RNA sequence: GGGAACGACUCGAGUAGAGUCGAAAACAAGUUUUGUUUGACAGAUGAUACUAGCAGGAUAUGGUUUCCAGAUCAAGAUGAUCCGCUAAUCGCAUUGGGUCAUUGCCAGGACACAACUUGGGAUGAGUACCGUCAUUCGCUUCGGCGAAUGACGGUAAAAAGAAACAACAACAACAAC
Reactivity to DMS in 0.01 (KOAc 150mM, MgCl2 10mM, bicine 150mM(pH8.5), 24C), signal-to-noise 1, nucleotides 027 to 126: c000a060a010g010u030u000u030u000g020u000u100u000g010a050c160a190g020a040u060g000a010u030a000c120u000a080g000c000a050g040g000a100u020a100u000g020g010u000u000u000c100c050a110g000a000u000c010a040a110g000a030u010g000a010u000c090c000g020c110u000a010a000u000c250g030c150a150u020u000g000g050g000u000c130a040u000u000g010c120c010a000g000g000a040c090a030c290a040a030c000u000u000g000g000g000a220u000g000a260g000
Reactivity to 2A3 in 0.01 (KOAc 150mM, MgCl2 10mM, bicine 150mM(pH8.5), 24C), signal-to-noise 1, nucleotides 027 to 126: c000a000a050g000u000u000u000u130g050u000u010u030g070a050c060a040g010a000u070g000a000u080a210c000u000a010g020c040a030g000g000a080u080a110u060g120g000u000u070u150c030c040a170g020a020u020c000a000a000g060a080u170g020a060u010c000c000g080c000u010a050a050u230c210g000c060a010u000u290g100g030g000u110c070a130u000u060g160c000c020a000g020g000a000c040a000c040a050a080c000u000u000g050g000g040a080u040g000a070g000
Notes: Source: RMDB library OK1LIB, as collected in RNAgym. The record gives the reactivity of an RNA of 177 nucleotides to DMS and 2A3. For DMS, 898 sequencing reads were counted. Reactivities are rounded to 0.1 and cut off at 0 and 3. The RNA was probed in 150 mM KOAc, 10 mM MgCl2 and 150 mM bicine (pH 8.5) at 24 C. Values cover nucleotides 27 to 126.